[RMDB]
RNA sequence: GGGAACGACUCGAGUAGAGUCGAAAAAGGAAAAACCUAUUAGGCAAACAAGCCAAAAGACAAGGAUACCCUUUCUCAAGCAUUGUUAGUUUAUGGGCUACUAGUAAGCGAAGAAUGAUACAGGAUGCAGGUAGUUGUAUUUCGAUACAACUACCUGAAAAGAAACAACAACAACAAC
Reactivity to 2A3 in 0.01 (KOAc 150mM, MgCl2 10mM, bicine 150mM(pH8.5), 24C), signal-to-noise 5, nucleotides 027 to 126: a000g100g050a100a070a030a010a000c030c010u050a070u140u110a050g000g030c040a040a180a150c020a190a050g010c040c000a040a020a040a040g060a040c100a030a030g020g000a030u190a210c000c000c000u000u020u010c010u010c020a020a040g010c030a080u040u020g050u110u020a080g020u030u000u120a060u130g100g020g020c000u050a020c010u010a090g080u050a010a060g010c020g050a010a000g020a080a110u080g060a030u060a090c030a010g050g090a040u150g040
Reactivity to DMS in 0.01 (KOAc 150mM, MgCl2 10mM, bicine 150mM(pH8.5), 24C), signal-to-noise 6, nucleotides 027 to 126: a050g000g010a030a100a080a100a080c020c010u000a080u020u020a170g010g000c010a080a070a140c220a080a090g000c000c000a020a050a060a070g000a090c250a070a050g000g010a120u010a140c170c000c010u000u010u010c010u000c020a130a090g010c070a080u010u010g000u000u000a070g030u010u000u000a030u000g000g010g010c050u010a040c060u000a070g020u010a030a060g010c060g010a060a080g000a050a020u010g010a070u010a040c110a080g010g020a100u030g010